Annotation:
The record gives the reactivity of an RNA of 177 nucleotides to DMS. Conditions: 150 mM KOAc, 10 mM MgCl2 and 150 mM bicine (pH 8.5), 24 C. DMS (dimethyl sulfate) methylates the pairing face of unpaired adenines and cytosines. It was measured as part of the RMDB library OK2TST.
RNA sequence: GGGAACGACUCGAGUAGAGUCGAAAAUGCGUGUUUGGCAAUUCUUGGAGCAUAUUUCUACAGGUUUUGGAGUACACGACAGAAGCGACAAGUUGAACUUCAAAAAAUUGUUGACAAGAAAAGAGCAACCUAUGGACCAGUUCGCUGGUCCAUAGGUAAAAGAAACAACAACAACAAC
Reactivity to DMS in 0.01 (KOAc 150mM, MgCl2 10mM, bicine 150mM(pH8.5), 24C), signal-to-noise 1, nucleotides 027 to 126: u010g000c000g000u020g010u060u000u030g010g020c020a100a110u000u000c030u000u030g000g020a280g020c130a060u050a100u010u000u030c040u000a090c060a070g000g000u030u030u020u000g000g000a050g010u010a030c080a100c010g000a070c080a080g020a160a160g030c120g100a100c110a080a080g000u010u000g000a070a040c000u000u010c000a000a040a020a060a090a070u000u010g010u000u040g000a110c160a000a090g000a060a020a130a150g000a160g000c080a090